The record gives the reactivity of an RNA of 177 nucleotides to DMS. The reactions ran in a buffer of 150 mM KOAc, 10 mM MgCl2 and 150 mM bicine (pH 8.5), at 24 C. The DMS profile rests on 1,072 reads.
RNA sequence: GGGAACGACUCGAGUAGAGUCGAAAAGAUAUGGACGUUACUUGCUGCUUUACUAUUUAGAUGCUAACUCGGAAACGAGUUAGCAUCUAAACGAAUAAAGAACUACAGCUUGUAACGUCCUAAGUCAGGAUGAACACUAGUUCGCUAGUGUUCAUCCAAAAGAAACAACAACAACAAC
Reactivity to DMS in 0.01 (KOAc 150mM, MgCl2 10mM, bicine 150mM(pH8.5), 24C), signal-to-noise 1, nucleotides 027 to 126: g000a030u000a300u000g010g020a050c000g010u000u000a010c010u000u000g050c010u010g000c000u000u010u000a000c100u010a240u000u000u000a000g010a010u000g000c000u000a000a000c000u000c010g000g030a200a090a150c000g010a000g020u000u000a000g010c000a000u000c000u000a000a020a000c120g000a070a080u010a020a020a020g000a140a010c130u010a300c020a010g010c000u000u000g010u000a000a000c000g010u000c000c000u000a000a080g030u000c000a150